[RMDB]
RNA sequence: GGGAACGACUCGAGUAGAGUCGAAAACUCAAUGUAGGGAUUAACAUUGAAUUGAUACAAAUACCUUUUUCGGUGUAGGGAAAAACACCGAAUUGAUACAAAUACCUUUCUCAAUGUAGGGAAUAACAAAACAGGCAUCGCUUCGGCGAUGCCUGAAGGAAUACAGAGACUUCGGUCUCUGUAUUCCAAAAGAAACAACAACAACAAC
Reactivity to 2A3 in 0.01 (KOAc 150mM, MgCl2 10mM, bicine 150mM(pH8.5), 24C), signal-to-noise 1, nucleotides 027 to 156: c040u020c030a000a000u050g050u050a120g000g080g090a150u030u270a040a080c010a010u000u010g000a070a020u100u170g050a130u140a120c060a040a230a040u180a180c050c000u010u030u030u030u000c000g000g000u020g000u000a040g110g030g050a140a140a060a000a000c000a000c020c020g000a000a010u010u020g020a020u020a060c010a000a070a000u050a040c000c000u030u250u100c090u060c060a070a200u170g040u120a070g120g000g070a050a120u160a250a000c050a050a070a000a040c000a000g000g000c020a000u020c040g020c050u160u100c250g070g020c000g000a000u000g000c000c000u000g000a010a000